[RMDB]
The data come from the RNA Mapping Database (RMDB), library RFMREP.
This 177-nucleotide RNA was probed chemically with 2A3 and DMS.
DMS adducts were read by reverse transcription with MarathonRT.
The 2A3 profile rests on 12,257 reads.
RNA sequence: GGGAACGACUCGAGUAGAGUCGAAAAUGCUAUGAUGUCGUAAUUUGCGUCUUACUCCACAUCAUGCGACAGUUGCCUGCUGUCAUUAAGCUGGUGUGGGUGACUGACGAAUAUCGCGUUCUGAGCAGCCUACAAUUAUGUUCGCAUAAUUGUAGGCAAAAGAAACAACAACAACAAC
Reactivity to 2A3 in 0.01 (KOAc 150mM, MgCl2 10mM, bicine 150mM(pH8.5), 24C), signal-to-noise 8, nucleotides 027 to 126: u060g000c000u020a030u120g020a010u060g140u220c010g020u050a080a140u030u050u160g080c010g000u000c000u070u250a270c010u030c010c000a000c000a010u000c000a020u260g020c020g010a000c000a000g040u110u150g250c030c060u090g000c010u010g020u000c000a040u160u210a140a060g000c020u010g000g000u000g000u000g000g000g000u000g010a050c080u040g000a010c010g000a010a030u080a050u090c030g000c000g020u060u000c020u040g070a020g010c010a020
Reactivity to DMS in 0.01 (KOAc 150mM, MgCl2 10mM, bicine 150mM(pH8.5), 24C), signal-to-noise 4, nucleotides 027 to 126: u010g010c000u000a120u000g000a050u010g000u010c030g010u000a110a090u010u000u010g000c030g000u000c040u000u000a060c080u010c010c030a010c010a000u010c000a010u010g030c000g010a040c010a010g000u000u000g030c280c180u010g000c000u000g010u000c020a170u010u010a080a150g010c010u000g000g010u000g010u000g010g000g020u000g000a060c230u000g010a020c020g010a040a040u000a080u010c050g020c010g000u000u000c050u000g000a050g000c050a130